[RMDB]
RNA sequence: GGGAACGACUCGAGUAGAGUCGAAAACAGGAGUUUGAAACCAACCAGGGCAACAUAGGGAGAAUCUGUCUCUAUAAAACAAACAAACAAACAGAACUUCAGACAUGUAUGACUGAGUGACUAAUAAGACUUCCAAGCAUUAGCAAUUACUAUAUGACUAUACGCCACUAUUCGUAGUGGCGUAUAGAAAAGAAACAACAACAACAAC
Reactivity to DMS in 0.01 (KOAc 150mM, MgCl2 10mM, bicine 150mM(pH8.5), 24C), signal-to-noise 1, nucleotides 027 to 156: c080a080g050g030a100g040u010u010u000g010a130a120a080c020c010a100a110c070c020a110g050g000g040c040a030a080c070a110u000a060g040g000g000a110g050a080a020u000c050u000g000u000c020u000c110u000a140u000a120a070a040a120c110a080a140a090c040a040a100a090c080a020a010a080c030a060g000a090a140c100u000u010c020a060g000a100c060a040u000g010u000a020u000g020a070c050u010g000a060g030u010g000a110c020u000a050a120u000a020a100g000a070c040u010u000c020c020a050a080g010c030a010u020u000a110g010c010a060a100u010u000a110c060u000a060u000a090u000g020a270
Reactivity to 2A3 in 0.01 (KOAc 150mM, MgCl2 10mM, bicine 150mM(pH8.5), 24C), signal-to-noise 4, nucleotides 027 to 156: c020a020g050g030a060g020u060u100u100g080a120a040a010c010c010a010a020c020c010a030g010g030g050c020a030a020c020a100u090a060g010g040g020a040g010a020a090u050c010u010g050u010c010u000c010u090a060u120a150a150a030a050c110a020a090a020c010a000a110a010c000a000a100a000c020a010g040a070a030c010u080u050c020a040g050a090c030a110u070g100u130a090u120g050a030c030u000g010a010g070u040g020a020c000u010a030a070u060a130a010g010a030c010u090u020c050c010a020a000g010c010a050u100u080a020g020c020a040a070u250u150a080c050u100a040u100a050u300g020a030
This 207-nucleotide RNA was probed chemically with DMS and 2A3. 2A3 is a SHAPE reagent: it acylates the 2'-hydroxyl of flexible nucleotides of all four kinds. The reactions ran in a buffer of 150 mM KOAc, 10 mM MgCl2 and 150 mM bicine (pH 8.5), at 24 C. For DMS, 1,830 sequencing reads were counted. 2A3 adducts were read by reverse transcription with SuperScript II with manganese. It was measured as part of the RMDB library OK3TST.